[RMDB]
RNA sequence: GGGAACGACUCGAGUAGAGUCGAAAAAAUGCAUGGCCAAGUCAACAAUGACGUCAUAGAAGAUGCUGGGCUUAUAAGAUCUUAAUGGAACUGAGAAAUUCCUAUUAGCUAGUGGCAUCAUACCUGUUAUACUGUCUUGGCACAAUGCAUUACUCACCAUAGUGGACUGCUUCGGCAGUCCACUAUGAAAAGAAACAACAACAACAAC
Reactivity to 2A3 in 0.01 (KOAc 150mM, MgCl2 10mM, bicine 150mM(pH8.5), 24C), signal-to-noise 1, nucleotides 027 to 156: a000a000u020g020c020a000u010g000g000c020c000a000a000g000u050c010a000a020c030a050a180u040g040a020c040g050u140c030a070u150a110g120a160a020g000a030u000g020c000u110g000g030g030c000u060u000a000u000a040a050g080a080u050c020u140u190a180a120u220g030g010a090a080c060u030g030a030g170a070a100a060u070u020c000c010u000a070u000u050a000g000c010u030a030g110u070g170g000c000a000u000c000a000u020a060c000c020u070g000u020u030a020u030a060c010u010g020u040c000u010u010g010g080c040a000c050a040a050u000g000c000a000u000u020a030c030u050c000a070c060
Annotation
Structure probing data (2A3) for a 207-nucleotide construct. For 2A3 the reverse transcriptase was SuperScript II with manganese.